Structure probing data (DMS and 2A3) for a 177-nucleotide construct. The RNA was probed in 150 mM KOAc, 10 mM MgCl2 and 150 mM bicine (pH 8.5) at 24 C. The data come from the RNA Mapping Database (RMDB), library OK2TRN. Values are in units of 0.01, from 0 to 300, in steps of 10. In probing experiments dimethyl sulfate is read out at A N1 and C N3, which are open when not base-paired. Values cover nucleotides 27 to 126.
RNA sequence: GGGAACGACUCGAGUAGAGUCGAAAAUCUGUUGAGAUUUGUGAUCGUAUAGUCAAAGUGGGACUACGGUCACAGCAACAGAAGUUAGACUGCGACAAGUCCCACGGACUAUUCUGGGUUCUAACCACUUCUCCUGAGUAUUCGUACUUAGGAGAAGAAAAGAAACAACAACAACAAC
Reactivity to DMS in 0.01 (KOAc 150mM, MgCl2 10mM, bicine 150mM(pH8.5), 24C), signal-to-noise 9, nucleotides 027 to 126: u000c010u000g010u010u010g010a090g020a070u000u000u000g000u000g000a060u000c020g010u010a030u000a020g010u010c010a050a090a120g020u000g000g010g000a020c000u000a050c100g010g010u000c000a010c000a010g010c010a030a010c010a040g010a040a040g010u000u000a060g010a070c010u000g010c080g030a050c090a300a160g020u010c010c010c030a090c050g010g010a170c000u000a010u000u000c020u000g000g000g000u000u000c000u000a010a020c010c010a020
Reactivity to 2A3 in 0.01 (KOAc 150mM, MgCl2 10mM, bicine 150mM(pH8.5), 24C), signal-to-noise 4, nucleotides 027 to 126: u020c010u020g060u080u140g170a160g030a280u100u140u100g000u030g030a030u020c030g000u030a060u060a110g030u020c040a090a140a100g080u110g020g040g010a000c010u020a030c050g030g000u000c000a000c000a010g030c000a010a010c010a010g080a070a010g020u000u030a020g010a050c030u040g060c100g030a080c130a160a010g000u020c000c000c000a020c060g050g020a020c010u010a030u040u030c030u040g010g000g010u020u010c000u000a000a010c000c000a010